[RMDB]
RNA sequence: GGGAACGACUCGAGUAGAGUCGAAAAGAUAUGGACGCUCUACCCACCUGCAGUAAGCGUUUGACGUCGGAAACGACCGAGCUUACGCAGAGGAGCGUCCUAAGUCAAAGCAUGGUUCGCCAUGCAAUCUCCAUCAGUAGUUCGCUACUGAUGGAGAAAAAGAAACAACAACAACAAC
Reactivity to DMS in 0.01 (KOAc 150mM, MgCl2 10mM, bicine 150mM(pH8.5), 24C), signal-to-noise 5, nucleotides 027 to 126: g030a140u000a180u000g010g000a020c010g010c000u000c010u010a120c010c020c040a300c110c000u000g000c000a150g030u010a010a020g010c000g010u000u010u030g000a100c300g010u000c000g000g000a080a080a140c020g000a010c000c040g000a090g010c000u000u000a000c010g000c020a010g000a080g010g010a020g020c010g000u000c000c000u000a000a050g000u000c110a090a120a150g000c000a010u000g000g000u010u010c230g020c000c000a010u000g000c000a050a050
Reactivity to 2A3 in 0.01 (KOAc 150mM, MgCl2 10mM, bicine 150mM(pH8.5), 24C), signal-to-noise 3, nucleotides 027 to 126: g050a060u170a180u220g010g010a000c000g000c010u000c000u130a300c030c020c000a010c000c020u030g000c030a150g000u000a000a000g000c050g050u060u200u300g100a060c040g000u010c000g000g040a050a070a080c010g020a020c020c040g040a000g000c010u010u010a000c010g070c000a000g020a000g000g000a000g010c000g010u000c000c000u000a020a000g020u020c070a100a000a060g040c000a000u000g030g020u080u220c300g040c060c000a000u000g000c000a010a010
Description: The record gives the reactivity of an RNA of 177 nucleotides to DMS and 2A3. 2A3 adducts were read by reverse transcription with SuperScript II with manganese. The 2A3 profile rests on 6,499 reads. DMS (dimethyl sulfate) methylates the pairing face of unpaired adenines and cytosines. Reactivities are given for positions 27 through 126. The reactions ran in a buffer of 150 mM KOAc, 10 mM MgCl2 and 150 mM bicine (pH 8.5), at 24 C.